This 207-nucleotide RNA was probed chemically with DMS and 2A3. The 2A3 profile rests on 1,631 reads. Values are in units of 0.01, from 0 to 300, in steps of 10. High DMS reactivity at an A or C suggests that its Watson-Crick edge is free.
RNA sequence: GGGAACGACUCGAGUAGAGUCGAAAAACCAAGUCUGGGGGCCGAUCAGGGUUGGCUCAAAGUAGGGUUUUGACUUGAAAACUCAAGCUGUGACCCCAAAACGAUGGAGGUAAAUGAGAAUCCUCCUAAAACUAUGGACACUUCGGUGUCCAUAGAACUUAACAAAGCUGUUCGCAGCUUUGUUAAGAAAAGAAACAACAACAACAAC
Reactivity to DMS in 0.01 (KOAc 150mM, MgCl2 10mM, bicine 150mM(pH8.5), 24C), signal-to-noise 1, nucleotides 027 to 156: a080c030c010a020a250g020u020c030u010g000g000g020g040g070c040c030g030a040u000c060a250g010g060g010u000u000g000g000c040u000c030a060a040a090g050u000a280g010g020g000u010u000u000u030g000a060c030u030u000g000a060a070a100a130c150u000c000a020a060g030c030u000g000u000g000a300c000c000c000c050a020a000a120a030c040g000a130u020g010g010a040g090g000u020a080a060a060u010g030a130g000a150a210u010c020c000u020c020c010u010a010a010a130a180c000u000a010u000g000g000a000c000a010c010u010u000c270g030g020u000g020u030c000c010a000u000a010g000a080a080
Reactivity to 2A3 in 0.01 (KOAc 150mM, MgCl2 10mM, bicine 150mM(pH8.5), 24C), signal-to-noise 2, nucleotides 027 to 156: a000c010c000a030a040g090u020c020u040g030g000g000g010g000c000c010g030a040u080c080a120g220g060g140u040u050g020g000c000u020c030a020a050a020g020u050a050g050g000g000u000u010u030u060g010a050c000u000u020g070a050a100a040a080c030u010c020a020a010g020c040u010g020u110g230a240c000c000c000c030a000a130a030a050c060g050a040u170g010g010a000g000g040u080a110a140a090u140g010a100g050a110a070u060c000c000u000c000c000u010a020a020a000a000c000u010a000u010g000g010a000c000a000c010u010u060c160g110g000u000g020u000c010c000a000u000a000g000a000a000